[RMDB]
RNA sequence: GGGAACGACUCGAGUAGAGUCGAAAAGUCGUGAAGGCGAUUUCUUGUUAUUACAGAAAGCUGGCAUGGAAUACGGCUUCGAUAUCACCAGUACGCAAACUUUUUGCGAAGGUGGCGUGCGCAUCAGGCCGCCAUACGAAUUCGUUCGUAUGGCGGCAAAAGAAACAACAACAACAAC
Reactivity to DMS in 0.01 (KOAc 150mM, MgCl2 10mM, bicine 150mM(pH8.5), 24C), signal-to-noise 2, nucleotides 027 to 126: g010u000c020g000u000g020a060a040g020g040c050g000a020u000u000u010c000u020u010g000u000u000a100u010u010a050c070a140g010a080a060a130g010c120u000g000g000c020a050u000g000g020a070a020u000a070c070g000g000c000u010u010c070g000a070u000a090u000c090a070c000c040a220g000u000a070c000g000c030a030a030a070c130u000u000u000u020u030g020c300g000a070a030g030g000u000g000g000c070g010u000g000c010g000c200a080u000c170a130g000
Reactivity to 2A3 in 0.01 (KOAc 150mM, MgCl2 10mM, bicine 150mM(pH8.5), 24C), signal-to-noise 1, nucleotides 027 to 126: g060u000c020g050u100g160a020a000g100g050c000g020a010u050u010u040c020u000u010g030u080u080a240u120u180a160c030a090g140a020a080a000g090c020u020g020g050c010a050u030g000g150a080a000u140a140c000g010g030c000u000u040c010g020a050u030a010u100c140a090c080c000a000g040u060a020c000g000c000a000a210a030c070u060u100u040u160u190g030c100g030a040a000g030g000u000g000g030c010g000u070g000c080g070c020a080u090c080a050g170